[RMDB]
RNA sequence: GGGAACGACUCGAGUAGAGUCGAAAAGUGGCGAACGUGCGGUCAUCACCUUAGAUGGUAAAUAUCUGCCGACCAAACCGUUCUGACAGCCAUGCGCAACCAUCAAAAGACGUUCACGAUGCUGCUGGUUCACUGUUGGGUUCGCCCAACAGUGAACAAAAGAAACAACAACAACAAC
Reactivity to 2A3 in 0.01 (KOAc 150mM, MgCl2 10mM, bicine 150mM(pH8.5), 24C), signal-to-noise 1, nucleotides 027 to 126: g080u070g030g040c040g000a080a070c010g100u030g030c160g050g000u020c040a080u060c050a110c050c000u080u060a080g030a250u120g020g020u070a070a160a050u190a050u010c060u110g000c010c040g000a000c010c000a020a030a050c050c000g000u030u050c020u000g020a030c070a000g000c030c000a050u080g000c020g040c000a030a040c010c000a090u000c000a110a010a050a010g090a040c040g070u060u010c040a020c060g000a030u110g020c040u010g020c030u020g000
Reactivity to DMS in 0.01 (KOAc 150mM, MgCl2 10mM, bicine 150mM(pH8.5), 24C), signal-to-noise 2, nucleotides 027 to 126: g050u000g000g010c030g000a070a000c010g020u030g040c300g000g020u010c060a060u010c100a080c100c020u000u000a120g000a060u000g010g000u000a050a050a070u000a070u010c110u000g040c070c120g000a060c040c020a070a190a060c300c080g020u000u010c010u010g010a070c110a150g010c100c050a010u000g010c070g000c080a080a050c010c050a020u010c050a080a020a100a120g010a080c020g000u000u010c010a050c020g010a100u000g000c020u000g000c030u000g000
Description:
An RNA of 177 nucleotides, treated with 2A3 and DMS and read out base by base. The RNA was probed in 150 mM KOAc, 10 mM MgCl2 and 150 mM bicine (pH 8.5) at 24 C. As a SHAPE reagent, 2A3 marks flexible, mostly unpaired nucleotides at the ribose 2'-OH. The data come from the RNA Mapping Database (RMDB), library OK2TRN. For 2A3 the reverse transcriptase was SuperScript II with manganese. For DMS the reverse transcriptase was MarathonRT.